[RMDB]
RNA sequence: GGGAACGACUCGAGUAGAGUCGAAAAACAUAGGCAAAUUAUUUCAGCAUUUAAAAAUGAUAAUUUUCAACUGAUCAUGGCAUGGUAGAUCAAUUUAAAGCCUAGAACACAUUGGUUGUGAGGCUUCCGGGUCAAGACAGGUUUGCUUCCUGAGAGACACGGUAGGAGUGUUCGCACUCCUACCGUGAAAAGAAACAACAACAACAAC
Reactivity to 2A3 in 0.01 (KOAc 150mM, MgCl2 10mM, bicine 150mM(pH8.5), 24C), signal-to-noise 1, nucleotides 027 to 156: a000c050a050u120a000g000g030c000a020a030a050u080u030a040u070u120u100c020a060g010c000a010u000u090u230a040a150a060a020a010u080g000a010u040a200a130u070u000u180u230c020a060a040c040u030g020a120u040c060a060u060g010g000c030a010u050g000g000u090a050g010a120u080c060a060a050u020u110u170a070a080a000g030c000c000u030a060g180a250a010c010a000c010a050u040u040g130g050u060u150g040u000g030a000g000g000c000u060u000c010c000g050g000g000u030c020a080a000g070a010c030a080g090g000u020u140u110g030c030u030u020c000c010u030g040a090g000a000g000a020
Reactivity to DMS in 0.01 (KOAc 150mM, MgCl2 10mM, bicine 150mM(pH8.5), 24C), signal-to-noise 1, nucleotides 027 to 156: a210c040a200u000a070g000g030c020a080a060a070u000u000a080u000u000u000c040a070g010c050a150u010u000u020a030a070a040a110a070u000g010a040u030a040a140u000u010u020u020c030a020a030c030u020g030a040u010c060a110u000g030g030c050a060u000g030g000u000a080g000a070u000c040a110a050u000u000u040a070a030a100g000c000c010u000a040g020a110a190c050a050c090a150u020u010g020g000u020u020g040u000g040a100g010g000c030u000u000c030c050g020g000g020u000c010a020a060g010a150c110a110g020g000u000u000u000g040c120u000u000c020c030u000g000a170g000a190g000a280